The data come from the RNA Mapping Database (RMDB), library OK2TST. The record gives the reactivity of an RNA of 177 nucleotides to 2A3 and DMS. The RNA was probed in 150 mM KOAc, 10 mM MgCl2 and 150 mM bicine (pH 8.5) at 24 C. Reactivities are rounded to 0.1 and cut off at 0 and 3. As a SHAPE reagent, 2A3 marks flexible, mostly unpaired nucleotides at the ribose 2'-OH.
[RMDB]
RNA sequence: GGGAACGACUCGAGUAGAGUCGAAAAGCGCCAGCCAGAUGGAAGUGCUGAUUCACCCGCAGUCAGUGAUUCACUCAAUGGUACGCUACCAGGACGGCAGUGUUCUGGCGCAGCUGGGUGAACCGGAUAUCACGUAGGGGUUCGCCCCUACGUGAUAAAAAGAAACAACAACAACAAC
Reactivity to 2A3 in 0.01 (KOAc 150mM, MgCl2 10mM, bicine 150mM(pH8.5), 24C), signal-to-noise 1, nucleotides 027 to 126: g040c020g000c020c010a000g090c050c020a040g070a180u170g010g030a050a010g020u030g050c030u000g010a050u000u050c020a040c020c030c010g020c000a000g070u030c000a010g030u030g110a180u020u080c030a030c040u040c010a040a130u100g010g060u060a030c080g000c040u020a040c000c000a010g030g040a020c080g030g220c170a080g070u090g000u240u010c010u000g010g040c000g050c030a030g010c040u070g020g000g040u010g000a030a040c000c000g060g000a030
Reactivity to DMS in 0.01 (KOAc 150mM, MgCl2 10mM, bicine 150mM(pH8.5), 24C), signal-to-noise 3, nucleotides 027 to 126: g020c030g000c010c000a080g020c080c090a110g010a110u000g000g010a100a070g010u000g000c010u000g000a080u000u000c080a100c060c040c080g030c080a100g020u020c040a040g000u010g000a050u000u000c090a040c050u000c050a150a090u010g010g000u000a100c110g010c020u010a070c000c000a030g000g010a060c060g000g030c210a070g020u010g030u000u000c030u000g010g010c300g000c040a060g030c040u010g020g010g020u000g000a040a030c020c010g010g000a160